[RMDB]
This 177-nucleotide RNA was probed chemically with DMS and 2A3.
The RNA was probed in 150 mM KOAc, 10 mM MgCl2 and 150 mM bicine (pH 8.5) at 24 C.
The data come from the RNA Mapping Database (RMDB), libraries RFM100 and RFMREP.
RNA sequence: GGGAACGACUCGAGUAGAGUCGAAAAACCUGAGAGGGCGGUGCAAUCAUAAAUGUAUAUCAAUACAGGGAUUGCUUGUUGGAAUGUCAAGCAUGAACGAGGAAUUCCUAGUAAGCGUGUAUCAUUAAAUAUGUUAGAGGUUCGCCUCUAACAUAUUAAAAGAAACAACAACAACAAC
Reactivity to DMS in 0.01 (KOAc 150mM, MgCl2 10mM, bicine 150mM(pH8.5), 24C), signal-to-noise 9, nucleotides 027 to 126: a090c030c000u000g010a080g010a090g010g010g020c050g010g020u000g000c060a070a050u010c080a090u020a050a060a050u010g010u010a020u010a060u030c080a200a110u000a010c020a030g010g010g010a030u000u000g000c010u000u010g010u000u000g000g010a120a040u000g000u010c170a080a120g010c020a030u010g000a060a060c040g010a030g000g000a070a050u000u000c010c000u000a080g010u010a030a050g010c130g000u000g000u000a030u010c030a050u000u000a080
Reactivity to 2A3 in 0.01 (KOAc 150mM, MgCl2 10mM, bicine 150mM(pH8.5), 24C), signal-to-noise 8, nucleotides 027 to 126: a010c010c010u040g020a050g030a020g010g040g000c000g010g020u030g020c030a030a090u090c030a090u140a210a110a010u070g040u050a030u010a010u120c030a110a010u020a050c010a010g000g000g000a010u010u030g130c010u000u000g010u020u020g040g170a110a090u070g050u120c110a100a020g040c010a060u040g030a020a000c010g000a000g000g020a010a030u010u010c010c000u020a090g020u050a060a020g040c060g050u050g020u040a030u150c010a010u040u100a060